[RMDB]
RNA sequence: GGGAACGACUCGAGUAGAGUCGAAAACUGGGUACUAGAGUAUGUGAAGGCUGACUCGGUCUCUAGUAUCUAACUCAUGCACUACUUGUAGACUAGACUGAGUUAGCCUUUAGUCAUAAGUGGUGUAGGAACACUAAGUAUUCGUACUUGGUGUUCCAAAAGAAACAACAACAACAAC
Reactivity to 2A3 in 0.01 (KOAc 150mM, MgCl2 10mM, bicine 150mM(pH8.5), 24C), signal-to-noise 9, nucleotides 027 to 126: c020u030g030g020g030u030a010c010u010a010g020a010g080u090a030u120g100u060g020a030a000g020g000c010u000g010a000c000u000c030g050g020u020c020u000c000u010a000g000u010a030u000c000u000a060a020c010u030c060a090u110g030c030a030c040u080a010c010u070u040g030u060a040g000a010c000u000a010g010a020c030u040g020a000g040u000u010a000g000c000c000u010u010u000a000g000u000c000a000u000a040a030g030u010g030g000u020g020u020a060
Reactivity to DMS in 0.01 (KOAc 150mM, MgCl2 10mM, bicine 150mM(pH8.5), 24C), signal-to-noise 6, nucleotides 027 to 126: c060u010g010g000g010u010a020c030u010a050g010a120g020u020a030u010g010u020g010a040a020g000g020c010u000g000a000c000u000c000g010g020u000c040u010c090u010a010g010u010a080u020c020u010a030a080c110u010c100a110u020g000c080a070c110u010a050c080u010u010g010u010a020g000a050c030u000a040g000a040c030u000g010a020g010u000u000a010g010c000c000u000u000u000a020g000u020c010a040u010a030a040g010u010g000g020u000g000u000a140